[RMDB]
RNA sequence: GGGAACGACUCGAGUAGAGUCGAAAAGGACAUGCUGCGCCAUCCUGCAUUUCUGUCCAAGCAGCUCCCUCCCGAACCAGCGCACGACGACGGCGUCGCGGCCGUCUACGACAUCGCGGUUGCGCGUUCCGCAUAUUCCCUUCGGGGAAUAUGCGGAAAAAGAAACAACAACAACAAC
Reactivity to 2A3 in 0.01 (KOAc 150mM, MgCl2 10mM, bicine 150mM(pH8.5), 24C), signal-to-noise 2, nucleotides 027 to 126: g010g020a010c030a080u060g000c000u060g000c010g060c000c000a060u010c000c000u020g040c030a060u040u090u100c030u030g120u000c040c000a070a000g050c020a030g010c020u020c010c000c000u060c010c010c000g010a010a030c010c010a030g020c020g000c030a010c060g040a000c030g000a000c000g000g050c000g030u260c090g030c050g080g000c000c000g000u010c000u000a070c070g120a030c000a060u080c020g040c000g070g000u040u150g000c020g000c000g060u000